Source: RMDB library RNAMAK, as collected in RNAgym. An RNA of 207 nucleotides, treated with DMS and 2A3 and read out base by base. In probing experiments dimethyl sulfate is read out at A N1 and C N3, which are open when not base-paired. The RNA was probed in 150 mM KOAc, 10 mM MgCl2 and 150 mM bicine (pH 8.5) at 24 C.
[RMDB]
RNA sequence: GGGAACGACUCGAGUAGAGUCGAAAAUCCUAAGUCGAUCGAUGCAAUCUAAGACAGCGUAUUGUCAGCUUAUCGGAAACGAUAAGCUUGGAUUUAUACGUCGAGAUUGUUUCGAUCGAUAUGGAAAAACGAGACCUCAGCUUCGGCUGAGGUCUCGGAAUGAAUAAGUCUUCGGACUUAUUCAUUCAAAAGAAACAACAACAACAAC
Reactivity to DMS in 0.01 (KOAc 150mM, MgCl2 10mM, bicine 150mM(pH8.5), 24C), signal-to-noise 2, nucleotides 027 to 156: u000c000c000u010a070a280g010u000c010g000a000u000c000g000a000u010g020c010a010a020u000c000u020a200a170g030a150c300a120g010c000g000u010a020u000u000g030u000c030a050g000c020u000u000a000u000c000g020g000a190a110a240c000g010a010u010a010a010g000c010u000u010g010g000a040u000u020u000a010u000a000c010g060u000c030g020a060g010a020u000u000g010u000u010u000c000g000a030u000c010g000a020u010a050u010g000g000a050a080a060a120a190c010g020a030g000a020c000c010u010c000a020g020c010u000u000c300g060g020c010u010g000a010g000g040u000c000u000c020g000
Reactivity to 2A3 in 0.01 (KOAc 150mM, MgCl2 10mM, bicine 150mM(pH8.5), 24C), signal-to-noise 4, nucleotides 027 to 156: u030c010c000u040a140a000g010u000c000g000a000u000c000g000a000u000g010c000a000a010u000c010u110a210a070g130a190c080a040g030c010g020u000a000u010u020g030u010c000a000g000c000u000u010a000u000c000g020g040a060a030a080c010g000a000u000a010a000g010c010u000u050g000g000a000u010u300u060a020u010a000c050g010u060c020g050a010g000a010u010u000g000u010u000u000c000g000a000u000c000g000a000u010a010u030g010g030a020a120a030a030a020c010g000a000g000a000c010c000u010c000a010g010c010u070u160c300g140g000c010u020g000a000g020g000u000c000u000c010g000
For 2A3 the reverse transcriptase was SuperScript II with manganese. Reactivities are given for positions 27 through 156.